[RMDB]
RNA sequence: GGGAACGACUCGAGUAGAGUCGAAAAAGGUCGGCGGCCAGGCGGGCGGUGGUCUCGCAGCACUGCUCGGUCUGGAUGCCGGAGAUGACCACUUCGCGGACGCCGUGGGAGGUGAGGAGCUGCUGGAGCCCGGUGGUGGUGAAGGCGUUGCGGGAGGCCUUUACCAGAACUUCGGUUCUGGUAAAGGAAAAGAAACAACAACAACAAC
Reactivity to 2A3 in 0.01 (KOAc 150mM, MgCl2 10mM, bicine 150mM(pH8.5), 24C), signal-to-noise 1, nucleotides 027 to 156: a000g030g020u080c000g000g010c010g050g000c010c000a000g010g000c000g020g020g000c020g040g000u020g020g170u050c050u110c230g170c100a070g030c000a000c000u000g000c000u000c020g090g060u060c000u030g050g000a020u040g000c010c000g000g000a010g010a060u140g050a060c000c000a030c090u130u090c030g050c020g150g000a060c040g020c020c030g020u000g010g010g040a110g010g010u270g090a080g010g030a010g000c070u110g010c040u080g060g050a040g050c000c050c030g060g020u070g000g100u090g010g040u020g070a010a020g010g000c040g100u140u070g030c050g020g020g000a030g060g000